[RMDB]
Chemical mapping of a 177-nucleotide RNA with DMS. DMS adducts were read by reverse transcription with MarathonRT. The reactions ran in a buffer of 150 mM KOAc, 10 mM MgCl2 and 150 mM bicine (pH 8.5), at 24 C. High DMS reactivity at an A or C suggests that its Watson-Crick edge is free.
RNA sequence: GGGAACGACUCGAGUAGAGUCGAAAAGAUAUGGAUCUUGCUGCUCAAUAGUCCAGUAGCAUCGAUCUACUGUGUCGGAAACGACAUGUAGGGAGCUACGGACUAUUGAGCAGCAAGAUCCUAAGUCCGAGUAUAUACACUUCGGUGUAUAUACUCGAAAAGAAACAACAACAACAAC
Reactivity to DMS in 0.01 (KOAc 150mM, MgCl2 10mM, bicine 150mM(pH8.5), 24C), signal-to-noise 2, nucleotides 027 to 126: g010a070u000a300u020g030g010a010u000c000u000u000g000c000u000g000c010u020c010a060a010u020a010g010u010c000c020a110g060u000a000g020c010a230u000c250g000a040u010c010u000a000c000u010g030u000g000u020c000g030g030a100a100a270c020g000a010c000a010u000g010u010a020g000g000g020a030g020c000u000a000c000g000g000a000c000u010a000u010u000g000a020g000c030a010g020c000a000a010g010a000u000c000c000u010a020a070g000u000c060